This 177-nucleotide RNA was probed chemically with 2A3. The reactions ran in a buffer of 150 mM KOAc, 10 mM MgCl2 and 150 mM bicine (pH 8.5), at 24 C.

RNA sequence: GGGAACGACUCGAGUAGAGUCGAAAAAGCAGGCUCCACCAAUCGUUGUUCAGGAGAUCUUUUGCAUGGACACUCAUGUCAUACUCUUCAUCUGAAUGUAUUGACUACACGGAAACUGAAUAACCUAUCCUCAGGUCGAUUUCGAUCGACCUGAGGAAAAAGAAACAACAACAACAAC
Reactivity to 2A3 in 0.01 (KOAc 150mM, MgCl2 10mM, bicine 150mM(pH8.5), 24C), signal-to-noise 2, nucleotides 027 to 126: a000g010c090a000g050g000c010u000c000c000a000c000c000a000a050u000c200g080u000u060g000u050u010c010a000g070g080a120g090a110u120c070u050u040u040u100g010c020a000u000g000g030a040c080a010c150u150c040a090u050g030u000c000a000u030a090c000u040c080u140u040c040a120u120c130u050g050a110a030u040g020u230a070u030u090g000a000c030u060a060c200a010c120g080g030a060a100a000c050u060g000a020a080u010a020a110c000c030u030a010